RNA sequence: GGGAACGACUCGAGUAGAGUCGAAAAGUGUAGCGUCACUUUGAUGGCGGUACUAUGAAUUGAUGCAAGGUGUGGAGCGACCUUAAACAGUUCUGGUGGUGCUCUGAAUGGAGAGCUCUACUGAGAUUUAACUUAUGCACGUUCGCGUGCAUAAGAACUACUAAGGUGAGUUCGCUCACCUUAGUAGAAAAGAAACAACAACAACAAC
Reactivity to DMS in 0.01 (KOAc 150mM, MgCl2 10mM, bicine 150mM(pH8.5), 24C), signal-to-noise 2, nucleotides 027 to 156: g030u000g020u000a040g040c020g020u000c010a070c040u000u000u020g010a080u010g020g030c020g000g000u000a070c020u000a060u030g020a120a160u010u000g000a140u000g020c050a120a060g020g030u000g000u000g010g000a090g020c060g000a070c020c010u010u000a060a070a110c040a100g030u000u000c040u010g040g070u010g010g050u010g010c010u000c030u000g010a150a120u010g020g010a080g000a090g010c010u000c000u000a050c030u000g000a090g010a090u000u000u000a090a200c000u000u000a000u000g000c030a020c010g020u000u010c300g030c020g070u000g020c000a010u000a000a020g000a080a180
Reactivity to 2A3 in 0.01 (KOAc 150mM, MgCl2 10mM, bicine 150mM(pH8.5), 24C), signal-to-noise 6, nucleotides 027 to 156: g070u060g010u020a040g110c010g020u000c000a020c090u210u130u260g220a290u080g040g010c010g010g060u000a010c030u030a060u150g060a080a080u120u090g060a050u090g110c060a040a020g010g000u020g010u090g040g000a010g000c010g000a000c000c000u060u110a110a060a010c030a050g000u010u000c010u010g010g000u010g000g000u030g000c000u000c010u040g100a130a090u160g070g070a020g000a000g020c010u010c000u000a030c030u060g060a050g050a270u040u150u170a090a010c000u000u000a000u000g000c000a010c010g010u020u030c200g010c000g060u000g000c000a000u000a000a000g000a000a010